[RMDB]
Description:
Structure probing data (DMS and 2A3) for a 170-nucleotide construct. For 2A3 the reverse transcriptase was SuperScript II with manganese. Conditions: 150 mM KOAc, 10 mM MgCl2 and 150 mM bicine (pH 8.5), 24 C. Source: RMDB library 15KLIB, as collected in RNAgym.
RNA sequence: GGGAACGACUCGAGUAGAGUCGAAAACGGGGUCCCCUUCCGAAGGAACGGAGGGGGGUGACUAGGAAUCAGGAUCCAGUGGAUCCGUGGGAAUUAUCCCGUUCCACCCCCGCGGCACACUCCUUCCAAGCCAUAUUCUUCGGAAUAUGGAAAAGAAACAACAACAACAAC
Reactivity to DMS in 0.01 (KOAc 150mM, MgCl2 10mM, bicine 150mM(pH8.5), 24C), signal-to-noise 9, nucleotides 027 to 129: c030g000g010g000g010u050c030c000c000c000u000u000c000c020g040a200a120g030g010a170a140c000g020g020a020g010g000g000g000g000g010u010g010a080c120u000a120g000g040a120a090u050c110a130g020g020a000u000c000c000a150g040u040g030g000a010u030c020c000g000u000g010g000g010a090a090u080u040a060u060c000c000c040g010u000u000c040c000a130c020c010c010c000c000g020c060g030g000c100a060c100a080c050u010c000c020u020u040c050c030a110a090g000
Reactivity to 2A3 in 0.01 (KOAc 150mM, MgCl2 10mM, bicine 150mM(pH8.5), 24C), signal-to-noise 9, nucleotides 027 to 129: c010g000g000g000g030u090c000c010c000c000u010u000c010c000g110a210a120g150g080a170a130c020g000g010a010g010g010g000g000g000g000u010g010a020c060u090a080g030g060a030a040u100c060a080g010g010a010u010c020c020a110g120u230g150g010a010u000c010c010g020u060g020g010g030a030a030u230u060a080u250c010c000c000g000u020u010c010c000a060c000c010c000c000c000g030c030g040g020c040a020c000a010c070u020c010c000u050u030c020c010a050a010g040

Description
DMS (dimethyl sulfate) methylates the pairing face of unpaired adenines and cytosines.